RNA sequence: GGGAACGACUCGAGUAGAGUCGAAAAUAUCUAUUUGGAAUUCAUGCAUUUCUAUAUGUGAUUACCUCCUCUCUUCUUCACAAAAUGCAUACCAUCUUCCUGAAAGAUAGGUGGUUAUCGAUACCAAUCCACAGUUAUUUUUCGAAAUAACUGUGGAAAAAGAAACAACAACAACAAC
Reactivity to DMS in 0.01 (KOAc 150mM, MgCl2 10mM, bicine 150mM(pH8.5), 24C), signal-to-noise 5, nucleotides 027 to 126: u010a050u010c020u010a090u010u000u000g010g000a080a060u000u000c100a070u010g010c040a020u000u010u000c130u010a130u010a080u020g020u000g000a040u000u000a090c070c050u000c040c010u000c010u010c040u000u010c050u010u010c040a030c070a060a040a060a020u000g000c040a070u000a080c040c030a030u000c070u000u000c030c030u000g010a140a100a100g000a060u000a020g020g030u000g000g010u000u000a140u010c100g010a120u010a100c050c040a070a160
Reactivity to 2A3 in 0.01 (KOAc 150mM, MgCl2 10mM, bicine 150mM(pH8.5), 24C), signal-to-noise 3, nucleotides 027 to 126: u100a020u020c020u060a100u070u080u050g020g050a050a060u130u070c040a020u120g040c010a020u000u060u000c090u120a170u030a090u300g040u030g040a060u020u120a060c000c040u030c000c030u020c030u000c000u080u000c000u050u030c020a000c010a040a100a010a000u060g020c000a020u030a050c000c020a030u010c010u030u020c020c010u080g080a100a060a000g030a030u080a030g010g020u010g000g020u020u040a090u090c030g000a030u060a100c070c010a000a070
This 177-nucleotide RNA was probed chemically with DMS and 2A3. DMS adducts were read by reverse transcription with MarathonRT. The DMS profile rests on 5,329 reads. It was measured as part of the RMDB library OK2TST. Values cover nucleotides 27 to 126.